[RMDB]
Description:
This 207-nucleotide RNA was probed chemically with 2A3 and DMS. The data come from the RNA Mapping Database (RMDB), library ARCHII. The reactions ran in a buffer of 150 mM KOAc, 10 mM MgCl2 and 150 mM bicine (pH 8.5), at 24 C. For DMS, 3,309 sequencing reads were counted.
RNA sequence: GGGAACGACUCGAGUAGAGUCGAAAAGACGAAAACUACGCACUGGCGGCGUAAGCCGUUCCAGUCGUCCUGGCUGAGGCGCCUAUAACUCAGUAGCAACAUCCCAGGACGUCAUCGCUUAUAGGCUGCUCCGUUCACCAGAGCUCACUGGUGUUCGCUCAUAUUAUGGGUUCGCCCAUAAUAUGAGAAAAGAAACAACAACAACAAC
Reactivity to 2A3 in 0.01 (KOAc 150mM, MgCl2 10mM, bicine 150mM(pH8.5), 24C), signal-to-noise 5, nucleotides 027 to 156: g030a010c040g070a030a030a090a110c110u210a060c070g020c040a010c010u010g000g000c000g000g040c020g050u130a080a080g010c000c000g040u180u060c010c000a000g000u000c010g010u010c000c000u020g040g000c000u000g000a000g000g020c060g000c020c010u010a020u000a020a010c010u000c020a020g020u120a050g100c050a020a110c020a190u100c000c010c000a000g000g010a030c010g040u050c010a110u150c050g050c120u080u020a010u000a010g020g020c000u020g030c090u020c050c020g010u010u000c000a010c000c000a010g000a060g080c090u080c060a070c010u010g010g000u000g010u000u010c010g000
Reactivity to DMS in 0.01 (KOAc 150mM, MgCl2 10mM, bicine 150mM(pH8.5), 24C), signal-to-noise 1, nucleotides 027 to 156: g020a140c030g020a090a040a080a070c060u020a020c000g010c070a000c030u000g010g000c000g000g000c030g030u000a080a130g010c000c010g020u000u020c040c040a030g030u000c000g010u010c050c000u020g010g030c060u010g040a050g000g000c060g000c040c010u000a030u000a040a050c040u010c050a080g050u010a110g000c060a080a140c030a090u000c050c050c010a170g010g000a070c030g010u010c080a060u000c040g000c060u000u000a060u000a070g030g000c020u000g050c020u000c040c000g030u010u000c040a030c010c010a020g010a190g000c090u010c190a090c020u000g010g010u000g040u010u000c020g000